[RMDB]
RNA sequence: GGGAACGACUCGAGUAGAGUCGAAAAGAAGGUAUGAACGUUGGAAGGCGCUUCCGUGUGAGCGGAAUUCUUUCAUACCAAGAACGGGAUAACCGGAAGGAGUUGGCGGACGGAUGUGGCCGAGAAAGGGUUUUACAUUCUUCGGAAUGUAAAACCCAAAAGAAACAACAACAACAAC
Reactivity to 2A3 in 0.01 (KOAc 150mM, MgCl2 10mM, bicine 150mM(pH8.5), 24C), signal-to-noise 1, nucleotides 027 to 126: g090a050a040g000g000u100a010u070g050a090a000c070g000u100u130g040g010a010a090g130g000c020g000c090u040u000c030c020g010u160g020u070g170a020g020c020g000g010a010a010u040u010c000u110u000u000c000a000u000a040c070c000a050a030g100a070a010c040g000g000g040a020u060a200a040c000c000g020g000a000a040g000g000a030g040u030u030g040g000c000g000g030a040c000g030g000a070u060g020u040g090g000c010c010g000a000g100a000a150a010
Reactivity to DMS in 0.01 (KOAc 150mM, MgCl2 10mM, bicine 150mM(pH8.5), 24C), signal-to-noise 1, nucleotides 027 to 126: g000a200a170g010g000u000a010u000g000a060a030c160g020u000u020g000g000a060a030g000g010c070g050c080u040u000c000c010g000u010g010u020g010a160g000c010g040g040a040a020u000u000c050u000u000u000c000a040u040a080c030c030a040a120g010a160a220c020g020g030g000a080u000a090a100c050c040g000g000a120a140g000g050a070g000u000u000g020g030c000g040g000a050c150g000g000a040u020g020u000g000g080c000c000g010a060g000a020a050a110
Structure probing data (2A3 and DMS) for a 177-nucleotide construct.
2A3 is a SHAPE reagent: it acylates the 2'-hydroxyl of flexible nucleotides of all four kinds.
For 2A3, 608 sequencing reads were counted.